[RMDB]
RNA sequence: GGGAACGACUCGAGUAGAGUCGAAAAGAUUAUGUGGGAGAGGCGCCCUUUCGUUUCGUCGGAUAAUUAAUUGCCAGUCGCUGGCUUUAGCGAUCUUGAUGUCAUCUGUAGCGAUGACUAUGCUACAUUAAGGUAUGAUCCGGAUACCACCGGUAAACCUCGAUCAUUACUUCGGUAAUGAUCGAGGAAAAGAAACAACAACAACAAC
Reactivity to 2A3 in 0.01 (KOAc 150mM, MgCl2 10mM, bicine 150mM(pH8.5), 24C), signal-to-noise 1, nucleotides 027 to 156: g040a020u090u120a030u140g080u130g070g020g010a110g020a020g010g050c040g020c000c000c000u010u070u110c100g000u030u070u010c020g020u000c000g020g010a080u140a110a020u150u190a000a090u230u150g020c010c010a020g040u030c070g000c100u010g010g010c000u070u090u080a010g020c000g020a000u010c060u020u100g010a030u030g050u020c000a020u000c070u030g070u210a010g000c010g020a030u030g000a000c010u000a040u130g020c010u060a020c020a120u100u090a120a000g080g000u210a020u110g030a100u080c000c020g000g010a020u030a040c010c010a060c000c000g000g050u020a070a090a000